[RMDB]
RNA sequence: GGGAACGACUCGAGUAGAGUCGAAAAUAGACCAUUUGUGAGAAGGGAGUUUUUGUUUACACCAAUACCCCCCAGUCUCUAAAUUUGUAAGAAGUAUUAUGCUCAAUUAAGGAACAUAGCUAGUUCGACAGAAGUACAGAUUCGUCUGUACUUCUGUAAAAGAAACAACAACAACAAC
Reactivity to 2A3 in 0.01 (KOAc 150mM, MgCl2 10mM, bicine 150mM(pH8.5), 24C), signal-to-noise 6, nucleotides 027 to 126: u130a020g060a030c010c000a030u060u050u140g210u050g000a030g000a030a030g000g000g000a060g030u000u020u010u090u060g040u010u160u100a060c060a020c010c030a000a020u020a040c000c020c010c000c040c050a060g100u010c000u000c010u040a060a080a080u120u160u170g140u100a070a090g050a080a010g090u060a100u290u090a050u150g010c010u020c070a130a140u120u130a140a030g120g000a030a000c010a040u060a020g050c040u070a020g070u010u030c010g000
Reactivity to DMS in 0.01 (KOAc 150mM, MgCl2 10mM, bicine 150mM(pH8.5), 24C), signal-to-noise 7, nucleotides 027 to 126: u030a090g010a270c020c030a110u010u010u000g010u010g010a030g030a100a110g010g010g000a070g010u000u000u000u010u010g000u000u010u050a110c210a120c300c010a020a040u010a060c020c020c010c000c010c060a130g020u000c010u000c010u000a020a070a070u010u010u010g010u020a060a060g010a040a040g000u010a040u010u000a020u000g000c030u010c020a060a130u030u040a110a140g010g000a010a010c010a010u000a020g000c130u000a040g000u000u000c040g000
Structure probing data (2A3 and DMS) for a 177-nucleotide construct. For DMS the reverse transcriptase was MarathonRT. 2A3 adducts were read by reverse transcription with SuperScript II with manganese. The RNA was probed in 150 mM KOAc, 10 mM MgCl2 and 150 mM bicine (pH 8.5) at 24 C. As a SHAPE reagent, 2A3 marks flexible, mostly unpaired nucleotides at the ribose 2'-OH.